[RMDB]
RNA sequence: GGGAACGACUCGAGUAGAGUCGAAAACGGCUAUGGUAGAAUCAUGGGGCUAUGACUGGUUAACGGAAGAGAUUCGGAAAUUCUACAGUUGGGUUUUAGAUAAAGAGCCAUAUAGUGAAAUCGCCAAUAGGGAGGUUGAAUUCGUUCAACCUCCCUAAAAAGAAACAACAACAACAAC
Reactivity to DMS in 0.01 (KOAc 150mM, MgCl2 10mM, bicine 150mM(pH8.5), 24C), signal-to-noise 1, nucleotides 027 to 126: c120g020g030c000u020a020u000g000g010u010a060g030a070a040u030c050a150u000g000g020g010g000c040u000a050u010g040a230c000u000g010g010u000u040a100a110c000g010g000a050a070g020a080g010a040u000u050c000g010g020a010a100a070u000u000c000u000a030c080a080g000u020u000g010g000g000u000u000u000u000a040g040a100u010a110a060a050g040a000g000c000c010a000u010a010u020a050g020u020g000a020a090a090u000c040g020c060c020a040a180